The data come from the RNA Mapping Database (RMDB), library ARCHII. Chemical mapping of a 207-nucleotide RNA with 2A3 and DMS. 2A3 adducts were read by reverse transcription with SuperScript II with manganese. For DMS the reverse transcriptase was MarathonRT. Conditions: 150 mM KOAc, 10 mM MgCl2 and 150 mM bicine (pH 8.5), 24 C.
RNA sequence: GGGAACGACUCGAGUAGAGUCGAAAAGGUUUCGACGGGGGUCGCGAAAUCGCCUGGAGCAUGCCGAGGGCGUCAUCUUCCUCGUUAAUCCGGUGGCAAAAAACUCAGACGCCAACGACGACGUCUACGCUGUAGCCGCUUAAGGCUUAAGCCCCGACUAAGAAACAUGGUUCGCCAUGUUUCUUAGAAAAGAAACAACAACAACAAC
Reactivity to 2A3 in 0.01 (KOAc 150mM, MgCl2 10mM, bicine 150mM(pH8.5), 24C), signal-to-noise 3, nucleotides 027 to 156: g080g000u010u020u010c030g020a030c040g040g000g000g020g040u110c030g000c050g070a060a070a030u110c080g000c020c050u090g030g000a020g010c070a060u140g040c070c060g030a120g000g030g000c010g080u070c020a100u000c030u120u100c000c010u020c020g030u060u080a040a030u050c030c020g020g020u040g010g020c030a050a010a020a020a010a160c120u130c130a040g020a050c040g000c010c050a060a050c070g110a010c050g010a010c000g000u010c030u060a030c040g020c050u060g040u100a020g040c010c010g030c040u110u140a080a040g000g000c000u000u010a050a010g030c000c020c000c000g000a010
Reactivity to DMS in 0.01 (KOAc 150mM, MgCl2 10mM, bicine 150mM(pH8.5), 24C), signal-to-noise 2, nucleotides 027 to 156: g050g010u000u010u000c050g010a070c030g020g020g050g010g020u010c040g050c040g020a040a050a070u000c140g010c010c000u010g010g020a110g020c070a130u000g010c080c010g020a210g010g020g040c040g010u000c100a080u020c070u000u000c000c000u000c020g000u010u000a090a220u010c070c040g000g050u000g040g030c000a000a040a090a100a050a050c090u000c040a030g000a030c000g010c000c020a070a150c180g000a180c020g000a010c000g000u000c000u000a080c100g060c060u020g000u000a120g030c010c010g070c110u000u000a050a070g010g000c020u000u010a040a150g010c020c000c010c020g010a300